[RMDB]
RNA sequence: GGGAACGACUCGAGUAGAGUCGAAAAAUCCAGCCAUGCACAUUGCCUCCUCUAACGCUUUUCUUGAUUUGAGGACAUCAUGUUUUAGUGUCGCUGCACUUACAACUGGUUUGACUUUUCAAACUGUACAGUCGGUGAUUCGUCACCGACAAAAGAAACAACAACAACAAC
Reactivity to DMS in 0.01 (KOAc 150mM, MgCl2 10mM, bicine 150mM(pH8.5), 24C), signal-to-noise 7, nucleotides 027 to 129: a000u020c020c020a000g000c160c040a000u040g000c130a080c130a090u000u020g030c100c060u060c000c000u060c030u020a100a050c080g020c150u000u000u000u000c040u050u040g000a000u050u010u020g000a080g010g000a060c110a070u040c000a050u000g020u000u000u000u000a000g020u000g030u030c020g040c130u030g010c070a050c050u030u040a060c110a080a060c080u050g060g030u000u000u050g030a110c300u020u040u050u030c050a030a020a050c050u030g020u020a100c150a080
Reactivity to 2A3 in 0.01 (KOAc 150mM, MgCl2 10mM, bicine 150mM(pH8.5), 24C), signal-to-noise 9, nucleotides 027 to 129: a000u020c010c000a000g030c020c010a060u070g010c030a010c000a080u020u110g040c000c010u010c020c000u010c020u050a080a020c040g050c060u060u100u120u060c060u120u160g180a260u080u020u090g020a030g010g030a020c000a030u070c000a020u080g130u040u070u040u090a040g000u030g010u020c040g030c120u080g030c030a010c020u050u100a020c020a090a040c080u070g020g000u010u010u040g040a050c060u050u100u090u070c020a030a030a030c010u040g060u080a080c020a050

This 170-nucleotide RNA was probed chemically with DMS and 2A3. Source: RMDB library 15KLIB, as collected in RNAgym. Values cover nucleotides 27 to 129. Conditions: 150 mM KOAc, 10 mM MgCl2 and 150 mM bicine (pH 8.5), 24 C. For 2A3 the reverse transcriptase was SuperScript II with manganese. For DMS, 20,391 sequencing reads were counted.